Chemical mapping of a 207-nucleotide RNA with 2A3. High 2A3 reactivity points to a flexible backbone, as in loops and unpaired stretches. For 2A3, 1,942 sequencing reads were counted.
RNA sequence: GGGAACGACUCGAGUAGAGUCGAAAAACCGGGUUCGCCCGGUAAUCAACCUUUGUGCGUCCUUCGAUGUGACCCGCUAUUGGGAAUCCCAUUGGGAUUCCUUGUAGCGCACAUCGUAUUUGGACGCACUCUGGUGUAACUAUCCUUUCGAGGAUAACAUCUACUGGACGUUCGCGUCCAGUAGAUGAAAAGAAACAACAACAACAAC
Reactivity to 2A3 in 0.01 (KOAc 150mM, MgCl2 10mM, bicine 150mM(pH8.5), 24C), signal-to-noise 2, nucleotides 027 to 156: a000c020c010g000g010g000u060u100c200g060c050c000c000g000g000u020a020a050u060c030a020a010c010c020u010u000u000g030u020g000c000g000u010c010c010u030u030c000g000a000u000g040u010g110a180c040c030c060g010c000u000a000u030u040g000g000g000a010a000u000c000c010c090a300u250u300g000g000g000a000u000u000c000c000u000u030g000u010a010g010c000g030c000a000c000a000u000c000g000u020a070u010u090u100g010g000a010c010g000c020a000c000u000c000u000g000g000u030g020u030a070a080c070u040a010u020c000c000u090u140u180c250g120a050g030g010a010u070a050a030